Conditions: 150 mM KOAc, 10 mM MgCl2 and 150 mM bicine (pH 8.5), 24 C. The record gives the reactivity of an RNA of 177 nucleotides to DMS and 2A3.

RNA sequence: GGGAACGACUCGAGUAGAGUCGAAAAACAUGCACUACGGUGCAUGACCUGGAUGAUGAUAGCAAAUGCUGACUGAACAUGAAGGUCUUAAUUAGCUCUAACUGACUAGCCGGUGUACGCACCGGCAACCAGUUUUCGAUUUCGAUCGAAAACUGGUAAAAGAAACAACAACAACAAC
Reactivity to DMS in 0.01 (KOAc 150mM, MgCl2 10mM, bicine 150mM(pH8.5), 24C), signal-to-noise 2, nucleotides 027 to 126: a270c000a000u030g000c000a000c040u000a150c100g130g050u000g000c010a000u000g000a080c000c000u000g060g030a150u000g010a180u010g000a120u030a000g000c000a060a030a070u010g020c180u010g000a040c000u000g030a100a150c300a160u010g000a150a230g000g000u000c040u010u020a170a010u020u020a060g000c070u010c000u000a180a010c010u010g000a060c040u060a030g010c000c000g000g000u000g020u000a100c080g000c070a050c000c000g000g000c000a000
Reactivity to 2A3 in 0.01 (KOAc 150mM, MgCl2 10mM, bicine 150mM(pH8.5), 24C), signal-to-noise 4, nucleotides 027 to 126: a000c000a000u000g010c010a000c000u050a040c270g120g000u000g000c000a010u000g000a000c000c000u060g050g050a100u090g000a020u060g080a090u150a080g020c020a040a070a050u160g020c050u030g010a030c000u030g020a040a050c050a140u110g070a130a030g020g040u040c000u050u130a150a090u070u140a030g040c010u010c000u070a080a130c050u080g130a110c010u050a050g000c000c020g000g010u000g020u030a020c180g000c050a000c000c000g000g020c000a000
Overview: 2A3 adducts were read by reverse transcription with SuperScript II with manganese. DMS adducts were read by reverse transcription with MarathonRT. Values cover nucleotides 27 to 126.